This 177-nucleotide RNA was probed chemically with 2A3 and DMS. For DMS the reverse transcriptase was MarathonRT. The DMS profile rests on 908 reads.
[RMDB]
RNA sequence: GGGAACGACUCGAGUAGAGUCGAAAAGAUAUGGACCCAGCUUUUGACGCUGGACGCUCGGAAACGAGCGGCCCAGCGAUAAGCUGGUCCUAAGUCAAAGUCGAACAAAGUUCGCUUUGUUCGACAAGUGUCCCAUUUAGUUCGCUAAAUGGGACACAAAAGAAACAACAACAACAAC
Reactivity to 2A3 in 0.01 (KOAc 150mM, MgCl2 10mM, bicine 150mM(pH8.5), 24C), signal-to-noise 1, nucleotides 027 to 126: g020a010u120a070u140g000g000a020c040c170c020a000g030c010u060u110u130u150g250a100c050g000c010u010g010g010a000c000g010c030u010c040g050g000a050a110a120c020g000a020g000c000g030g010c040c010c010a010g000c020g000a010u000a040a000g000c000u000g000g000u000c020c000u000a150a030g020u000c060a150a080a060g000u010c000g000a000a000c000a020a000a010g020u040u140c260g050c160u000u020u000g000u010u010c000g000a010c020a000a010
Reactivity to DMS in 0.01 (KOAc 150mM, MgCl2 10mM, bicine 150mM(pH8.5), 24C), signal-to-noise 1, nucleotides 027 to 126: g010a000u000a300u000g000g000a040c090c060c040a020g010c000u000u000u010u010g000a160c090g020c000u010g000g020a110c000g000c010u000c010g040g000a110a090a220c030g010a000g010c000g000g000c210c000c000a000g000c000g020a010u000a000a010g000c000u000g030g010u000c000c000u000a010a120g010u000c050a070a110a170g010u000c000g000a000a000c000a010a040a010g010u000u020c300g040c010u020u000u010g000u000u000c000g000a000c000a000a040